[RMDB]
RNA sequence: GGGAACGACUCGAGUAGAGUCGAAAAACGCUAGUACGCUAGCGAGGAAUGAUGAUUGACAACCGCCCCAGUCUGCAAUCUUAAUGAUGAUUCGGAUUUACAAGACACGCCAGUUUUGCUUCUGAAAUUGAUAUAUCGCGUUCGCGCGAUAUAUCAAAAAAGAAACAACAACAACAAC
Reactivity to 2A3 in 0.01 (KOAc 150mM, MgCl2 10mM, bicine 150mM(pH8.5), 24C), signal-to-noise 2, nucleotides 027 to 126: a010c000g000c020u030a010g030u100a020c220g040c170u030a000g000c000g030a080g040g140a170a070u230g040a060u030g000a050u070u100g030a070c030a060a040c010c000g010c000c020c000c000a000g030u000c000u000g030c030a030a040u050c000u080u110a090a070u150g230a020u090g030a050u000u010c000g000g000a040u110u040u080a130c100a120a000g030a000c010a010c070g050c070c000a000g000u000u060u050u030g020c000u020u040c000u030g100a160a200a100
Reactivity to DMS in 0.01 (KOAc 150mM, MgCl2 10mM, bicine 150mM(pH8.5), 24C), signal-to-noise 2, nucleotides 027 to 126: a110c020g020c010u000a010g020u020a070c250g030c010u000a040g020c020g000a090g000g000a090a070u020g000a080u020g000a070u010u020g000a060c050a060a050c030c060g010c000c000c010c040a120g000u010c040u000g030c080a010a010u020c010u030u030a120a070u040g000a070u010g000a160u010u010c050g010g010a080u000u020u030a030c110a040a020g000a050c070a140c060g000c020c040a070g010u000u000u010u010g000c020u000u000c000u000g030a070a050a100